[RMDB]
RNA sequence: GGGAACGACUCGAGUAGAGUCGAAAAGAUAUGGAGCGUUUAGGGAGACACACAUCGGAAACGAUGUGAAUGUCGAAGAACUAACGCUCCUAAGUCAAACGACCACACAGUUCGCUGUGUGGUCGAACUUAAUCCUGAGGUUCGCCUCAGGAUUAAGAAAAGAAACAACAACAACAAC
Reactivity to DMS in 0.01 (KOAc 150mM, MgCl2 10mM, bicine 150mM(pH8.5), 24C), signal-to-noise 3, nucleotides 027 to 126: g000a010u000a000u000g000g010a000g010c000g000u010u000u010a020g010g010g010a000g020a000c010a090c010a000c000a020u000c000g030g000a020a010a010c000g020a010u000g020u000g000a060a090u030g050u000c010g010a150a170g010a220a270c010u000a010a010c000g020c000u000c000c000u000a000a070g000u010c000a100a140a300c030g010a000c000c000a000c000a010c000a010g020u000u020c250g040c000u000g020u000g030u000g000g010u000c010g010a010a100
Reactivity to 2A3 in 0.01 (KOAc 150mM, MgCl2 10mM, bicine 150mM(pH8.5), 24C), signal-to-noise 3, nucleotides 027 to 126: g000a000u010a010u030g000g000a000g010c010g010u020u150u300a030g030g000g020a030g010a000c000a000c000a010c000a040u000c010g010g000a010a000a000c010g000a000u010g020u000g020a100a110u170g000u000c010g030a190a040g000a010a000c000u000a010a000c010g010c000u000c000c010u000a000a000g000u000c000a020a070a030c020g000a000c030c000a010c000a010c010a010g080u160u180c250g100c240u010g000u000g010u000g000g000u000c010g000a010a010